[RMDB]
RNA sequence: GGGAACGACUCGAGUAGAGUCGAAAACUCGCAGGGUUCGCCCUGCGAGAAAGGCCGAGGUUGUUGCUCGGUUGAAAACAACAACCCUUCGAAACAAGGGAAAAACCCUUACCUUCGGGUAAGGGAACACUAUUACGACGUUCGCGUCGUAAUAGUGAAAAGAAACAACAACAACAAC
Reactivity to DMS in 0.01 (KOAc 150mM, MgCl2 10mM, bicine 150mM(pH8.5), 24C), signal-to-noise 2, nucleotides 027 to 126: c020u000c000g020c000a020g000g000g010u000u020c200g020c010c000c000u000g010c010g010a000g010a020a100a130g000g000c030c000g010a030g000g010u000u010g000u010u000g000c000u000c030g000g010u010u000g000a090a040a070a100c050a070a080c150a080a150c000c000c000u000u000c070g000a130a080a160c300a010a030g030g000g000a020a030a070a120a090c010c000c000u000u000a000c000c000u000u010c170g040g010g000u000a000a010g000g010g000a030a060